[RMDB]
RNA sequence: GGGAACGACUCGAGUAGAGUCGAAAAGACCAAUGAAAUUGUUGACUCUGUGCAGUAUGCUCAUAAACAUGACAUACAAAUUACUAAUGAGAGCUACAAUAAUUAUGUACCCUCAUAUGUUAAACCUACCCGGUAACCUUCGGGUUACCGAAAAGAAACAACAACAACAAC
Reactivity to 2A3 in 0.01 (KOAc 150mM, MgCl2 10mM, bicine 150mM(pH8.5), 24C), signal-to-noise 4, nucleotides 027 to 129: g060a000c010c000a020a040u130g050a010a050a030u040u020g000u040u090g030a040c000u000c000u000g040u070g010c020a020g000u000a000u000g010c020u020c000a000u070a070a220a060c130a060u010g020a000c000a000u010a020c050a050a050a030u180u120a040c040u150a100a020u120g050a060g000a000g030c020u030a020c020a000a030u130a100a030u130u120a070u100g020u020a050c000c000c000u030c000a030u080a030u090g050u040u110a060a040a000c020c010u010a060c030c000
Reactivity to DMS in 0.01 (KOAc 150mM, MgCl2 10mM, bicine 150mM(pH8.5), 24C), signal-to-noise 3, nucleotides 027 to 129: g070a280c010c020a090a040u040g000a120a120a130u050u050g010u050u010g030a110c090u030c070u030g110u060g050c170a100g060u070a020u020g020c100u000c070a020u100a090a080a140c220a240u030g040a060c050a020u220a040c000a040a130a060u040u060a090c070u080a200a040u080g050a040g000a000g030c090u000a090c010a010a070u070a130a050u010u070a100u000g030u020a010c080c010c000u070c000a050u060a040u080g010u020u020a040a060a100c100c060u000a050c150c100

This 170-nucleotide RNA was probed chemically with 2A3 and DMS. It was measured as part of the RMDB library 15KLIB. Reactivities are given for positions 27 through 129. For 2A3 the reverse transcriptase was SuperScript II with manganese. The 2A3 profile rests on 4,403 reads.